The record gives the reactivity of an RNA of 177 nucleotides to DMS and 2A3. The reactions ran in a buffer of 150 mM KOAc, 10 mM MgCl2 and 150 mM bicine (pH 8.5), at 24 C. Reactivities are rounded to 0.1 and cut off at 0 and 3. For DMS the reverse transcriptase was MarathonRT. 2A3 adducts were read by reverse transcription with SuperScript II with manganese. In probing experiments dimethyl sulfate is read out at A N1 and C N3, which are open when not base-paired. For DMS, 13,904 sequencing reads were counted.
RNA sequence: GGGAACGACUCGAGUAGAGUCGAAAAUACGUGACCUUCGGGUCACGUAACCGGCGUUCCCAAGUCAAAAAGAGAGACGCAAUCUCGACAGCGGCCUUUACGUAUGAGUUGCUUUCGAGCAACUCAAACGAUAUCUAUUAUUCGUAAUAGAUAUCGUAAAAGAAACAACAACAACAAC
Reactivity to DMS in 0.01 (KOAc 150mM, MgCl2 10mM, bicine 150mM(pH8.5), 24C), signal-to-noise 8, nucleotides 027 to 126: u000a000c000g010u000g010a000c000c000u000u010c220g030g020g030u000c000a000c000g010u000a010a090c070c030g010g000c050g010u000u000c000c000c000a140a100g010u020c140a040a070a070a100a080g010a100g010a050g000a060c060g010c120a100a120u000c030u000c030g010a080c150a110g000c050g000g000c060c030u000u010u000a070c140g010u000a070u000g000a020g000u000u000g010c000u000u000u010c140g000a010g010c010a000a000c000u000c000a010a050
Reactivity to 2A3 in 0.01 (KOAc 150mM, MgCl2 10mM, bicine 150mM(pH8.5), 24C), signal-to-noise 7, nucleotides 027 to 126: u050a000c000g000u000g000a010c000c000u010u030c270g070g000g000u000c000a000c000g000u000a000a000c020c010g060g020c020g010u010u000c010c010c000a010a020g160u130c050a040a040a020a140a030g110a000g000a000g010a040c040g010c070a040a090u030c030u030c070g040a060c040a020g020c020g010g020c000c020u090u130u120a080c060g120u180a130u170g010a000g010u000u000g010c020u060u060u130c230g080a010g000c010a000a000c000u000c010a010a000